[RMDB]
Background
Conditions: 150 mM KOAc, 10 mM MgCl2 and 150 mM bicine (pH 8.5), 24 C. Chemical mapping of a 207-nucleotide RNA with 2A3 and DMS. Reactivities are given for positions 27 through 156. The DMS profile rests on 2,069 reads. Values are in units of 0.01, from 0 to 300, in steps of 10. DMS adducts were read by reverse transcription with MarathonRT. For 2A3, 2,654 sequencing reads were counted.
RNA sequence: GGGAACGACUCGAGUAGAGUCGAAAAACUGCAUCUACGGAUGCAGAACUACGUUCAUCCAAUUUAUUCGGACGCAUGAAAUGAGAAUAGGGAACGGGAUUCUCAUACGCAGGCUACGGCCUGCGAAAAAACUCCUUAUGCUUCGGCAUAAGGAGAAGCUCUUCUUAAUGUUCGCAUUAAGAAGAGCAAAAGAAACAACAACAACAAC
Reactivity to 2A3 in 0.01 (KOAc 150mM, MgCl2 10mM, bicine 150mM(pH8.5), 24C), signal-to-noise 4, nucleotides 027 to 156: a000c000u000g000c000a000u000c000u020a050c280g090g000a010u000g000c000a000g000a000a000c030u080a020c020g010u000u010c020a070u030c020c010a070a060u090u160u140a140u100u190c060g040g010a010c020g030c070a070u140g130a130a120a070u060g010a040g010a030a010u040a040g000g020g030a010a020c010g010g000g020a010u010u020c010u010c000a010u040a050c020g010c010a000g020g000c010u020a080c270g090g000c000c000u000g000c000g000a000a000a000a000a000a000c000u000c000c000u000u000a010u000g000c000u010u060c170g080g000c000a000u000a000a000g000g000a000g000a000a000
Reactivity to DMS in 0.01 (KOAc 150mM, MgCl2 10mM, bicine 150mM(pH8.5), 24C), signal-to-noise 1, nucleotides 027 to 156: a110c070u000g000c000a020u000c010u000a060c300g040g000a030u000g000c000a010g000a100a100c010u000a030c000g020u000u000c000a220u020c070c080a040a080u000u000u000a160u020u020c060g010g010a030c020g000c000a040u000g000a080a100a130u000g010a120g010a050a070u000a150g000g010g000a070a100c070g000g010g000a300u000u000c010u000c000a100u000a150c010g000c000a060g010g010c020u030a100c300g080g000c000c000u000g030c000g000a000a050a060a060a000a030c000u000c000c000u000u010a000u020g020c000u000u020c250g030g010c000a010u000a020a010g080g000a000g000a020a000